[RMDB]
RNA sequence: GGGAACGACUCGAGUAGAGUCGAAAAGAUAUGGAUCAGGUGACGAGUCCAGAUCAUCGGAAACGAUGAGGUAUGGGACGAUGAGUCACCCUGAUCCUAAGUCAAAACGUCCAGUUCGCUGGACGAACAUAGUCAGGUAGUUCGCUACCUGACUAUGAAAAGAAACAACAACAACAAC
Reactivity to DMS in 0.01 (KOAc 150mM, MgCl2 10mM, bicine 150mM(pH8.5), 24C), signal-to-noise 6, nucleotides 027 to 126: g010a020u000a060u010g000g010a020u000c000a030g010g010u000g010a010c000g010a060g010u000c000c000a150g010a210u000c000a010u000c000g010g000a030a010a050c000g010a010u000g000a010g000g030u020a140u010g020g010g010a020c020g010a140u010g010a100g000u000c000a010c090c070c080u010g000a010u000c000c000u010a000a080g000u000c010a100a070a140a210c030g010u000c000c010a020g010u000u010c260g020c010u020g000g010a010c000g010a060a150
Reactivity to 2A3 in 0.01 (KOAc 150mM, MgCl2 10mM, bicine 150mM(pH8.5), 24C), signal-to-noise 8, nucleotides 027 to 126: g010a000u020a010u060g000g000a000u000c000a000g000g000u000g010a000c020g030a060g060u000c010c010a030g090a270u010c000a010u010c000g010g010a010a010a010c010g000a010u020g020a010g060g120u300a240u300g170g000g010a010c040g040a250u300g050a010g000u010c000a010c070c000c010u000g000a000u000c000c000u000a000a000g000u000c020a020a010a110a180c020g000u000c000c000a010g010u080u100c300g020c110u000g000g000a000c000g000a100a000